An RNA of 177 nucleotides, treated with DMS and read out base by base.
RNA sequence: GGGAACGACUCGAGUAGAGUCGAAAAGGAGGGCGCAAGGAACCGACCGAACCCGGCGAGGAAACCCGACGCCAGGCCGGGAGGCCACGGAGGCACGCGCCAAGGCAAACCGAAGCGGGGCCGGGAACGUUGUACCCGAAUUCGUUCGGGUACAACGAAAAGAAACAACAACAACAAC
Reactivity to DMS in 0.01 (KOAc 150mM, MgCl2 10mM, bicine 150mM(pH8.5), 24C), signal-to-noise 1, nucleotides 027 to 126: g010g070a210g000g000g010c020g060c100a200a090g000g000a060a150c030c020g000a120c020c000g000a100a300c020c000c000g020g080c000g010a240g000g000a090a140a070c090c060c010g000a180c070g000c050c000a030g040g000c000c000g000g020g010a070g000g010c070c070a140c070g010g000a120g040g010c060a050c130g000c070g020c000c040a060a050g010g000c140a010a070a070c030c090g000a190a130g030c090g000g000g000g000c120c010g000g020g000a080a010